[RMDB]
This 177-nucleotide RNA was probed chemically with DMS and 2A3. The 2A3 profile rests on 1,454 reads. High DMS reactivity at an A or C suggests that its Watson-Crick edge is free. For DMS, 1,020 sequencing reads were counted. It was measured as part of the RMDB library OK2TRN. 2A3 adducts were read by reverse transcription with SuperScript II with manganese. Reactivities are rounded to 0.1 and cut off at 0 and 3. The reactions ran in a buffer of 150 mM KOAc, 10 mM MgCl2 and 150 mM bicine (pH 8.5), at 24 C.
RNA sequence: GGGAACGACUCGAGUAGAGUCGAAAAUCACUGCGGUGGCACGCUCAUUUAGGUUUACCCGUGUCUGUCAGCCUAAGAACACUGCCGAAAAUACUGAGGUUCUCUUCGUGUUCUUCGGCAAGGACAAGAACGUCACGGAAUUCGUUCCGUGACGUUCAAAAGAAACAACAACAACAAC
Reactivity to DMS in 0.01 (KOAc 150mM, MgCl2 10mM, bicine 150mM(pH8.5), 24C), signal-to-noise 2, nucleotides 027 to 126: u010c080a080c080u030g000c070g000g000u000g000g000c090a060c060g010c010u000c220a100u000u010u000a080g000g000u000u000u010a210c030c000c010g020u000g020u000c000u020g010u010c130a210g000c010c000u010a000a060g000a060a010c030a060c050u030g000c030c020g000a060a030a050a100u000a090c230u010g020a130g000g010u010u000c250u010c070u000u030c160g030u000g000u000u000c090u000u000c070g000g040c000a010a060g010g010a050c100a100a180
Reactivity to 2A3 in 0.01 (KOAc 150mM, MgCl2 10mM, bicine 150mM(pH8.5), 24C), signal-to-noise 2, nucleotides 027 to 126: u080c000a010c110u090g020c050g030g000u060g060g040c030a000c070g020c010u020c040a130u040u080u230a110g050g060u000u100u110a070c000c030c010g040u010g010u030c020u000g020u070c030a000g000c000c000u020a020a000g000a020a000c020a000c070u090g070c000c000g060a080a020a020a040u300a100c130u090g080a080g140g000u150u060c100u070c010u130u170c080g020u030g020u000u000c030u030u000c000g000g030c020a030a020g030g010a000c000a010a070